Structure probing data (2A3) for a 177-nucleotide construct. The RNA was probed in 150 mM KOAc, 10 mM MgCl2 and 150 mM bicine (pH 8.5) at 24 C. Source: RMDB libraries RFM100 and RFMREP, as collected in RNAgym. 2A3 adducts were read by reverse transcription with SuperScript II with manganese. Values cover nucleotides 27 to 126.

[RMDB]
RNA sequence: GGGAACGACUCGAGUAGAGUCGAAAACUACUCUCAUCGUUCUUUUGUGUACAAAUUUUUUAAAGGAGCGAUGUUGAUGGCAUUAUGGUUCUUUAGUGGAGAAUUGAUGAUUGGUCACAAGACAUCUCGUACAUAUGCGCUUCGGCGCAUAUGUACGAAAAGAAACAACAACAACAAC
Reactivity to 2A3 in 0.01 (KOAc 150mM, MgCl2 10mM, bicine 150mM(pH8.5), 24C), signal-to-noise 2, nucleotides 027 to 126: c000u050a070c020u010c010u000c000a010u020c010g010u000u030c000u090u030u030u010g060u000g060u050a040c070a050a100a110u130u120u010u040u140u150a080a070a000g060g020a020g040c070g000a020u000g030u040u040g070a180u040g050g000c000a010u060u020a090u110g020g020u080u010c000u030u040u070a110g050u100g070g040a060g040a150a000u090u100g050a030u040g060a060u090u060g080g030u060c050a040c010a060a050g020a000c000a030u010c030u000